[RMDB]
RNA sequence: GGGAACGACUCGAGUAGAGUCGAAAACUGACCGGAAUCAACUCGUGAGUUAGGUAACAUCGGGGAGAUGCGAUUGGUCAUGGCAAUUGGAAUAACAGUCAUGUGAUAACUGUUCGCAAAAUCACUACCGGAUCCUUUUAUUCGUAAAAGGAUCCGGAAAAGAAACAACAACAACAAC
Reactivity to 2A3 in 0.01 (KOAc 150mM, MgCl2 10mM, bicine 150mM(pH8.5), 24C), signal-to-noise 1, nucleotides 027 to 126: c040u050g040a000c000c030g050g150a010a000u010c000a000a000c000u020c000g030u050g160a120g000u060u140a160g010g300u210a070a020c000a040u080c030g000g000g010g050a010g020a030u060g000c100g000a020u100u070g000g060u020c030a010u040g000g000c030a040a090u000u120g090g090a160a090u060a140a080c010a010g000u000c070a020u060g040u030g050a030u030a080a070c000u070g000u100u090c070g020c040a000a040a090a090u020c070a000c040u020a110
Reactivity to DMS in 0.01 (KOAc 150mM, MgCl2 10mM, bicine 150mM(pH8.5), 24C), signal-to-noise 1, nucleotides 027 to 126: c070u000g050a030c000c020g040g000a220a040u020c010a000a300c060u000c030g030u010g010a070g010u000u000a100g010g000u000a080a010c020a070u000c030g000g010g050g000a300g000a030u000g000c100g020a110u000u000g030g000u030c030a070u000g000g000c080a010a020u000u000g000g000a140a050u000a070a230c120a030g030u030c100a120u000g010u030g020a060u000a050a050c030u000g000u000u040c030g010c140a070a020a070a010u000c080a040c060u000a170
The record gives the reactivity of an RNA of 177 nucleotides to 2A3 and DMS.
The reactions ran in a buffer of 150 mM KOAc, 10 mM MgCl2 and 150 mM bicine (pH 8.5), at 24 C.
For DMS, 568 sequencing reads were counted.
Reactivities are given for positions 27 through 126.